Structure probing data (DMS and 2A3) for a 170-nucleotide construct.
High DMS reactivity at an A or C suggests that its Watson-Crick edge is free.
For DMS the reverse transcriptase was MarathonRT.
[RMDB]
RNA sequence: GGGAACGACUCGAGUAGAGUCGAAAAAACAGCAGAUACGGCACAUGCUAACAACAUUAACAGAUUUAAUGUUGCAAUCACUCGUGCCCAAAAAGGUAUUCUUUGUGUUAUGACAUCUCAGGCACUCGACGUCGUAUGUUCGCAUACGACAAAAGAAACAACAACAACAAC
Reactivity to DMS in 0.01 (KOAc 150mM, MgCl2 10mM, bicine 150mM(pH8.5), 24C), signal-to-noise 9, nucleotides 027 to 129: a050a010c070a000g050c070a020g000a080u010a090c120g000g040c000a040c010a110u020g030c080u000a120a190c010a030a010c010a040u000u010a000a000c290a200g060a110u080u000u010a000a010u000g020u000u000g030c030a040a050u000c070a000c180u070c080g000u020g020c020c020c140a010a020a040a040a020g010g000u030a060u020u020c030u040u050u030g000u000g030u010u000a080u070g030a060c130a090u030c040u000c060a040g000g000c060a010c060u030c070g040a050c090
Reactivity to 2A3 in 0.01 (KOAc 150mM, MgCl2 10mM, bicine 150mM(pH8.5), 24C), signal-to-noise 9, nucleotides 027 to 129: a020a000c060a010g080c010a000g020a080u090a080c020g000g010c010a010c000a050u040g010c020u060a100a040c010a000a000c000a000u010u010a020a020c040a120g210a240u060u040u050a010a010u010g000u000u010g020c040a020a060u090c020a020c060u100c070g010u020g010c000c010c010a030a060a030a000a000g150g000u090a110u080u050c040u040u070u060g050u000g040u060u070a190u140g030a050c010a130u040c070u010c070a020g040g000c030a010c030u050c050g100a060c100